[RMDB]
Description:
This 177-nucleotide RNA was probed chemically with 2A3. The RNA was probed in 150 mM KOAc, 10 mM MgCl2 and 150 mM bicine (pH 8.5) at 24 C. It was measured as part of the RMDB library OK1LIB. 2A3 adducts were read by reverse transcription with SuperScript II with manganese. For 2A3, 631 sequencing reads were counted.
RNA sequence: GGGAACGACUCGAGUAGAGUCGAAAACGGUCUUUGCCAACCUUAUUCCGUCGUGGGAAUCGAUGGCUGCAUUCCUGGAGCAGCGAUGUAGGACUUUGGAGGACGUGGAUUGCGCCAUGGCAACCUAGUCAUGCCCUGACUUCGGUCAGGGCAUGACAAAAGAAACAACAACAACAAC
Reactivity to 2A3 in 0.01 (KOAc 150mM, MgCl2 10mM, bicine 150mM(pH8.5), 24C), signal-to-noise 1, nucleotides 027 to 126: c000g000g030u080c010u070u040u100g010c030c090a130a100c000c030u230u100a180u050u000c020c000g010u040c000g040u120g030g170g030a020a080u030c000g020a010u040g080g040c070u070g000c030a040u010u210c000c080u190g000g000a040g020c000a000g000c000g050a040u100g090u140a010g020g020a060c000u080u110u060g080g040a120g010g090a020c000g050u080g060g000a010u000u050g090c000g020c040c010a000u010g010g000c000a010a010c000c000u040a010